[RMDB]
RNA sequence: GGGAACGACUCGAGUAGAGUCGAAAACGUCUGCAACGCAGCAGCUGUGGGUGGCCUUGAUGAGUCUUACUUAAUUUCAUAGCUCAUAUCUGUGUAGUUAUUUGCUGCUGGCAAACUAUUGCUUCAUCUUAUUUUCGCAAAUUCUAUAGACAGCAGGCGUAGGUAUUUAAUUCGUUAAAUACCUACGAAAAGAAACAACAACAACAAC
Reactivity to DMS in 0.01 (KOAc 150mM, MgCl2 10mM, bicine 150mM(pH8.5), 24C), signal-to-noise 2, nucleotides 027 to 156: c020g030u000c010u000g010c060a120a070c060g010c020a080g030c010a040g020c030u000g030u000g010g010g050u000g010g020c020c020u010u010g010a040u010g010a060g020u000c040u000u000a070c060u000u000a040a090u000u000u000c030a090u000a080g010c030u010c070a080u000a140u000c070u000g020u000g010u010a090g000u000u000a070u000u020u010g030c000u000g020c000u000g000g000c070a060a070a100c040u000a060u000u010g020c010u010u000c060a100u000c080u010u010a170u000u000u000u000c100g010c060a060a060a130u000u000c050u000a100u000a180g010a080c040a050g020c030a040g010g010
Reactivity to 2A3 in 0.01 (KOAc 150mM, MgCl2 10mM, bicine 150mM(pH8.5), 24C), signal-to-noise 5, nucleotides 027 to 156: c000g010u010c020u120g070c060a070a060c110g010c030a040g000c030a010g030c060u100g070u180g300g030g010u040g020g020c010c020u000u030g040a010u020g000a020g020u050c030u050u050a050c010u050u160a080a100u110u150u070c060a080u070a030g020c000u010c060a060u070a090u110c080u040g050u020g030u060a060g030u070u100a060u050u110u100g020c020u000g000c010u020g030g010c010a040a060a080c080u100a090u140u070g010c000u090u100c030a120u020c060u090u200a170u090u170u100u140c040g000c050a040a040a070u060u000c030u040a060u030a060g030a040c010a020g020c010a010g040g000
Chemical mapping of a 207-nucleotide RNA with DMS and 2A3. 2A3 adducts were read by reverse transcription with SuperScript II with manganese. Values cover nucleotides 27 to 156. Conditions: 150 mM KOAc, 10 mM MgCl2 and 150 mM bicine (pH 8.5), 24 C. For 2A3, 2,965 sequencing reads were counted.